[RMDB]
RNA sequence: GGGAACGACUCGAGUAGAGUCGAAAACGGGAGUUGAGACUGGUGUGUGUUUAGUGGAUUAUCUGAUCAGCACAUGUGUGACAGUGUUGAUCACAAGUCAUUGCCAGCUCUGUUCAUUUUCUUCCCUCUCGUAAUAGGCGUUCGCGCCUAUUACGAGAAAAGAAACAACAACAACAAC
Reactivity to 2A3 in 0.01 (KOAc 150mM, MgCl2 10mM, bicine 150mM(pH8.5), 24C), signal-to-noise 4, nucleotides 027 to 126: c000g020g070g000a030g010u090u100g040a030g060a140c000u040g010g050u060g010u000g020u030g020u120u130u080a250g060u060g110g050a110u080u040a090u180c050u010g020a000u000c000a000g070c000a030c080a220u020g080u060g090u150g150a020c040a010g010u010g000u000u040g010a010u000c000a000c010a010a040g040u060c020a050u000u190g000c000c000a000g000c010u000c000u000g050u040u060c030a050u000u050u040u000c030u030u010c020c000c010u000
The data come from the RNA Mapping Database (RMDB), libraries RFM100 and RFMREP. Structure probing data (2A3) for a 177-nucleotide construct. 2A3 adducts were read by reverse transcription with SuperScript II with manganese. Values cover nucleotides 27 to 126. Conditions: 150 mM KOAc, 10 mM MgCl2 and 150 mM bicine (pH 8.5), 24 C. Reactivities are rounded to 0.1 and cut off at 0 and 3.